[RMDB]
Conditions: 150 mM KOAc, 10 mM MgCl2 and 150 mM bicine (pH 8.5), 24 C. An RNA of 177 nucleotides, treated with DMS and 2A3 and read out base by base. For 2A3, 646 sequencing reads were counted. DMS adducts were read by reverse transcription with MarathonRT. It was measured as part of the RMDB libraries RFM100 and RFMREP.
RNA sequence: GGGAACGACUCGAGUAGAGUCGAAAAAAUCGGUAGAGGCCGGUAGCGAAAGUAUAAUGAUCUCCCAAGAUGUGGGCAAGCCUAGCUAGGGAGGUAUCGAAAACUGUUUGUUGAAGUGGCGUAAUUCUGUACAUACCGAAUUCGUUCGGUAUGUACAAAAAGAAACAACAACAACAAC
Reactivity to DMS in 0.01 (KOAc 150mM, MgCl2 10mM, bicine 150mM(pH8.5), 24C), signal-to-noise 2, nucleotides 027 to 126: a050a010u020c040g000g020u000a110g010a100g010g000c060c030g020g000u010a100g010c040g000a060a050a010g010u020a100u000a110a080u050g010a050u010c020u000c000c010c010a130a050g010a060u040g030u010g010g000g000c100a080a110g030c010c010u010a070g010c040u000a110g000g010g000a030g020g040u000a020u010c040g000a040a080a070a100c070u000g000u010u040u030g000u000u010g000a020a280g000u000g000g040c080g000u010a080a060u000u000c080
Reactivity to 2A3 in 0.01 (KOAc 150mM, MgCl2 10mM, bicine 150mM(pH8.5), 24C), signal-to-noise 2, nucleotides 027 to 126: a000a000u030c000g080g010u130a070g000a050g100g020c010c000g000g010u050a000g000c060g160a130a050a000g010u060a050u000a090a150u080g060a030u060c000u000c040c000c000a000a030g050a030u190g020u140g160g000g070c000a030a040g060c000c010u090a030g000c000u040a000g000g000g000a000g050g000u000a030u030c050g190a040a040a040a040c070u070g050u080u220u060g100u000u010g010a110a030g030u000g070g000c060g000u130a000a300u240u170c030